[RMDB]
Structure probing data (DMS and 2A3) for a 177-nucleotide construct.
The RNA was probed in 150 mM KOAc, 10 mM MgCl2 and 150 mM bicine (pH 8.5) at 24 C.
The 2A3 profile rests on 13,316 reads.
2A3 adducts were read by reverse transcription with SuperScript II with manganese.
RNA sequence: GGGAACGACUCGAGUAGAGUCGAAAAGAUAUGGAGUGUAGACAUGCGAUUAGUCGGAAACGACUAGUUCGCAACAGCUACCUCCUAAGUCAAAAGACUUUGAACGACUUCGGUCGUUCAAAGUCAAUCCCUAUUUAGUGUUCGCACUAAAUAGGGAAAAAGAAACAACAACAACAAC
Reactivity to DMS in 0.01 (KOAc 150mM, MgCl2 10mM, bicine 150mM(pH8.5), 24C), signal-to-noise 6, nucleotides 027 to 126: g000a030u000a300u010g000g000a020g000u010g010u000a000g000a050c080a190u000g010c010g010a020u000u000a000g000u000c000g010g000a070a060a110c000g000a010c000u000a000g010u010u000c010g020c010a020a060c300a170g000c010u000a000c000c000u000c000c000u000a020a050g000u000c020a080a090a140a140g000a020c000u000u010u000g000a010a010c000g000a020c000u000u010c230g020g010u000c000g000u000u000c000a000a010a010g010u000c000a020a070
Reactivity to 2A3 in 0.01 (KOAc 150mM, MgCl2 10mM, bicine 150mM(pH8.5), 24C), signal-to-noise 4, nucleotides 027 to 126: g040a010u060a050u150g010g010a020g020u300g010u060a000g030a090c040a140u070g000c010g010a010u000u010a010g000u000c010g000g000a040a050a040c000g000a000c010u020a010g110u110u200c010g000c000a000a010c010a010g010c000u000a000c000c010u000c000c000u000a090a020g040u010c030a040a040a040a170g020a000c000u010u010u000g000a010a000c000g050a020c040u080u120c300g040g000u000c000g000u000u000c000a000a000a000g000u000c000a010a000